[RMDB]
RNA sequence: GGGAACGACUCGAGUAGAGUCGAAAAGGUUUUCGAGAACGACUUCUCUGAGUUCGAUAGUACCCAAAAUAACUUUUCACUUGGGCUUGAGUGUAUAAUUAUGGAGGAGUGCGGCAUGCCGCAAUGGGAAUUAGAGCUAAUUCGUUAGCUCUAAUUCAAAAGAAACAACAACAACAAC
Reactivity to DMS in 0.01 (KOAc 150mM, MgCl2 10mM, bicine 150mM(pH8.5), 24C), signal-to-noise 9, nucleotides 027 to 126: g010g020u010u000u010u010c070g020a160g010a100a150c070g000a070c030u000u000c020u000c010u010g020a060g010u010u000c030g020a130u010a090g020u000a120c020c010c020a060a120a110a060u010a050a070c100u000u000u000u010c040a040c050u000u000g010g010g010c120u010u000g000a040g010u000g010u010a040u000a040a060u010u000a050u000g010g010a280g000g000a090g020u000g010c030g010g010c070a090u000g020c020c010g010c060a040a060u010g010g010
Reactivity to 2A3 in 0.01 (KOAc 150mM, MgCl2 10mM, bicine 150mM(pH8.5), 24C), signal-to-noise 9, nucleotides 027 to 126: g060g010u080u090u150u300c090g070a050g040a120a030c020g030a030c040u090u010c010u020c070u120g030a020g030u120u100c010g000a020u080a090g090u120a100c010c000c000a010a050a010a030u120a040a040c060u100u060u080u080c040a030c030u020u030g100g110g070c030u100u150g050a010g030u030g060u030a050u040a180a100u130u110a070u120g030g010a040g040g000a050g050u050g010c010g010g010c060a080u130g030c000c010g000c060a030a070u140g090g040